[RMDB]
An RNA of 207 nucleotides, treated with 2A3 and read out base by base. The data come from the RNA Mapping Database (RMDB), library ARCHII. Conditions: 150 mM KOAc, 10 mM MgCl2 and 150 mM bicine (pH 8.5), 24 C.
RNA sequence: GGGAACGACUCGAGUAGAGUCGAAAAAAACCAUCGAAUUGCGGGGACGCCCUUAGAGCUUCACGUACGGCCAAUCGUUCGAAAGGAUUGAUUUGGCAUCAGGUUAAUGGCCUCGAGUAUCGUAAUAACCGUGAAGAUUGGGUAAUCCGCAGCCAAGGGCUUGACGUUACUUCGGUAACGUCAAGCCAAAAGAAACAACAACAACAAC
Reactivity to 2A3 in 0.01 (KOAc 150mM, MgCl2 10mM, bicine 150mM(pH8.5), 24C), signal-to-noise 1, nucleotides 027 to 156: a010a010a000c110c000a130u120c130g070a130a110u210u020g010c000g000g060g020g010a050c050g010c010c000c020u160u210a120g010a070g200c000u010u010c000a000c000g010u020a000c040g000g040c000c000a010a000u000c000g000u000u010c000g090a040a040a030g040g000a000u090u300g000a020u210u240u170g000g000c000a000u030c000a000g040g000u030u000a010a000u000g020g000c000c000u070c110g000a010g000u130a300u300c000g000u000a000a000u010a000a000c050c000g000u000g000a000a000g000a030u100u170g000g020g020u010a000a050u000c000c020g000c020a000g000c000c000a080a100g090